[RMDB]
RNA sequence: GGGAACGACUCGAGUAGAGUCGAAAACGCCAUCCACCGCGACUGGGGUGCGCGCUACACCUGGCCGCGCUUCGUGUGCGCGCUGCCCAAGGAGUUCUUCGCCGCGGUGCGCGCCGAACUGGCCAAGGCCUCCGUGCCUGUUCGCAGGCACGGAGGCAAAAGAAACAACAACAACAAC
Reactivity to 2A3 in 0.01 (KOAc 150mM, MgCl2 10mM, bicine 150mM(pH8.5), 24C), signal-to-noise 1, nucleotides 027 to 126: c000g020c000c000a040u000c000c000a040c040c020g040c010g080a050c140u120g020g000g000g110u000g000c070g000c000g050c020u160a000c000a010c050c000u010g040g000c000c010g230c090g040c120u040u070c000g150u100g000u000g000c000g000c000g020c010u120g030c070c040c000a030a110g080g040a080g010u200u160c050u100u130c060g030c060c040g000c000g000g040u020g050c060g020c000g000c000c020g010a040a010c010u040g000g000c100c000a010a010g090
The data come from the RNA Mapping Database (RMDB), library OK1LIB.
An RNA of 177 nucleotides, treated with 2A3 and read out base by base.
Reactivities are given for positions 27 through 126.
The RNA was probed in 150 mM KOAc, 10 mM MgCl2 and 150 mM bicine (pH 8.5) at 24 C.